[RMDB]
RNA sequence: GGGAACGACUCGAGUAGAGUCGAAAAAAAAGCCCAAAUCGAAAUCGAAGGAGAAAUAACAUUUGAUUAAUGUUUUUUUUCCCUUUUUAUGAUUUAGGGUUCUUUCUUUCAUCCCUAUCCCUCGAUGUGCAAACGAAACAUUCGUGUUUCGUUUGCAAAAAGAAACAACAACAACAAC
Reactivity to 2A3 in 0.01 (KOAc 150mM, MgCl2 10mM, bicine 150mM(pH8.5), 24C), signal-to-noise 1, nucleotides 027 to 126: a000a000a000a000g000c050c000c000a000a000a000u010c000g000a000a020a000u070c030g060a030a090g020g000a000g000a010a000a000u030a000a000c000a010u060u040u000g120a110u160u300a010a000u000g000u000u000u000u000u000u000u000u000c070c010c000u070u030u000u000u000a230u090g050a000u040u010u050a160g000g000g000u010u130c070u020u040u000c010u020u030u010c030a060u060c010c040c030u010a070u130c050c000c020u050c020g030a040u080g050
Background
Chemical mapping of a 177-nucleotide RNA with 2A3. 2A3 adducts were read by reverse transcription with SuperScript II with manganese. It was measured as part of the RMDB library RFM100.